An RNA of 177 nucleotides, treated with 2A3 and DMS and read out base by base.
Conditions: 150 mM KOAc, 10 mM MgCl2 and 150 mM bicine (pH 8.5), 24 C.
The data come from the RNA Mapping Database (RMDB), library TTRDES.

RNA sequence: GGGAACGACUCGAGUAGAGUCGAAAAGAUAUGGAGGGAACGGCCACAGCAACAGCAACGAUCGGAAACGAUCGUUGACAUGCUGCUGGUUUCCCUCCUAAGUCAAAACCACCUGUUCGCAGGUGGACAUAUUCCUGAUGUUCGCAUCAGGAAUAUGAAAAGAAACAACAACAACAAC
Reactivity to 2A3 in 0.01 (KOAc 150mM, MgCl2 10mM, bicine 150mM(pH8.5), 24C), signal-to-noise 8, nucleotides 027 to 126: g030a030u090a030u170g010g000a010g010g010g020a080a060c290g230g000c010c010a020c000a010g000c000a010a150c030a200g090c000a000a010c010g000a000u000c000g030g030a080a070a040c010g000a000u010c000g010u000u010g010a020c000a010u060g000c000u020g010c080u000g000g000u000u030u010c000c000c000u000c000c000u000a000a000g000u000c010a020a010a030a070c010c000a000c000c000u030g040u060u100c300g020c140a000g000g000u010g010g000a010
Reactivity to DMS in 0.01 (KOAc 150mM, MgCl2 10mM, bicine 150mM(pH8.5), 24C), signal-to-noise 9, nucleotides 027 to 126: g000a050u000a300u010g010g010a010g010g010g010a030a070c300g020g010c040c050a140c020a010g000c000a020a070c240a110g000c000a000a000c000g010a020u000c000g010g000a100a090a240c010g010a000u000c010g010u000u000g000a040c070a140u000g010c000u000g010c200u000g000g000u000u000u000c000c000c000u000c000c000u000a010a050g000u010c040a100a060a140a180c000c000a010c000c000u000g000u000u010c260g030c010a010g000g020u000g000g010a100